[RMDB]
Structure probing data (DMS and 2A3) for a 177-nucleotide construct.
The DMS profile rests on 911 reads.
2A3 adducts were read by reverse transcription with SuperScript II with manganese.
Values are in units of 0.01, from 0 to 300, in steps of 10.
RNA sequence: GGGAACGACUCGAGUAGAGUCGAAAAAAAAAGGACCUACAGCCGAGCGAGUGACUGAAAACGGCAAAGUCACGAAGCAUCGUUAUAGCUAAAUGGUCGUAGCGAAAUAAGAGUUGUUCCCAGUAAAAUGACACCGUUAAUUCGUUAACGGUGUCAUAAAAGAAACAACAACAACAAC
Reactivity to DMS in 0.01 (KOAc 150mM, MgCl2 10mM, bicine 150mM(pH8.5), 24C), signal-to-noise 2, nucleotides 027 to 126: a030a030a060a100a090g000g010a020c040c010u010a180c220a070g000c030c010g000a060g060c040g010a300g040u000g000a020c030u030g030a030a080a170a100c110g020g000c100a090a100a040g000u000c000a000c000g000a090a130g000c010a030u000c020g010u030u020a130u000a070g030c000u020a040a030a070u010g000g000u000c030g050u000a120g000c070g000a080a090a040u000a120a200g000a020g000u000u000g000u000u000c000c020c000a100g010u000a030a050a080
Reactivity to 2A3 in 0.01 (KOAc 150mM, MgCl2 10mM, bicine 150mM(pH8.5), 24C), signal-to-noise 1, nucleotides 027 to 126: a060a030a030a060a000g170g000a040c040c010u030a010c130a000g000c000c050g020a010g000c000g040a060g030u010g020a000c010u060g060a070a140a070a090c080g120g000c060a090a120a000g000u000c010a000c020g050a100a000g030c000a210u010c030g000u080u110a170u090a080g000c000u030a040a170a100u140g020g000u030c010g020u000a000g060c000g020a060a060a100u130a050a010g000a010g000u000u010g010u000u010c000c000c000a000g000u010a000a030a010